[RMDB]
RNA sequence: GGGAACGACUCGAGUAGAGUCGAAAACUGCUCAACUGAGGGAGAAGCAUAUUUUGCGAACUCAAACUGUGCUUUGUGACAUGCUCCUUAGAGAUGCUCCUGUAGGUAUUGUCACUCAAUCACCUAACUGUGACAGGCCGUUCGCGGCCUGUCACAGAAAAGAAACAACAACAACAAC
Reactivity to 2A3 in 0.01 (KOAc 150mM, MgCl2 10mM, bicine 150mM(pH8.5), 24C), signal-to-noise 1, nucleotides 027 to 126: c050u120g000c000u010c070a140a110c080u110g010a050g030g080g040a000g000a030a010g000c000a000u080a060u020u150u080u010g060c120g060a010a000c010u000c000a000a000a000c050u020g000u050g110c000u000u080u150g070u050g000a010c010a030u180g010c010u110c000c000u010u000a010g010a020g010a080u300g030c020u060c060c000u080g010u010a000g000g000u000a070u020u020g030u020c030a000c080u050c010a000a030u000c010a040c070c020u010a050a060